[RMDB]
RNA sequence: GGGAACGACUCGAGUAGAGUCGAAAAGAAAGAAAGAAAGAGGCCUAGCAGUGAUGAUGAUGACACUAAGUCACUUUCCUGAACAUGACUGAUGGUUUUAAGUCACUACCUCAUCUGAGCUGGCAAAACGGCACCUAAGAUUCGUCUUAGGUGCCGUAAAAGAAACAACAACAACAAC
Reactivity to DMS in 0.01 (KOAc 150mM, MgCl2 10mM, bicine 150mM(pH8.5), 24C), signal-to-noise 2, nucleotides 027 to 126: g050a130a160a150g030a080a080a050g010a030a120a070g000a080g020g000c060c020u050a070g020c010a040g000u000g000a020u010g040a010u060g010a080u020g040a060c020a030c190u020a180a160g000u000c010a050c040u000u010u030c020c100u020g020a150a070c190a170u020g000a010c020u000g000a020u000g000g000u020u000u000u000a030a120g000u000c010a010c170u070a140c110c060u000c000a060u010c030u000g020a290g000c020u020g000g070c020a080a000a030
Reactivity to 2A3 in 0.01 (KOAc 150mM, MgCl2 10mM, bicine 150mM(pH8.5), 24C), signal-to-noise 2, nucleotides 027 to 126: g030a000a080a000g210a090a100a030g110a070a080a020g140a000g050g010c040c090u150a040g010c010a090g120u060g030a000u000g000a000u010g010a030u030g000a030c000a020c100u050a020a020g010u000c010a000c000u060u060u070c020c060u040g080a040a040c000a130u050g010a030c040u030g010a050u110g130g170u080u080u140u110a050a070g000u000c000a000c070u070a030c010c010u000c000a040u080c030u060g030a040g000c000u010g030g010c100a080a000a000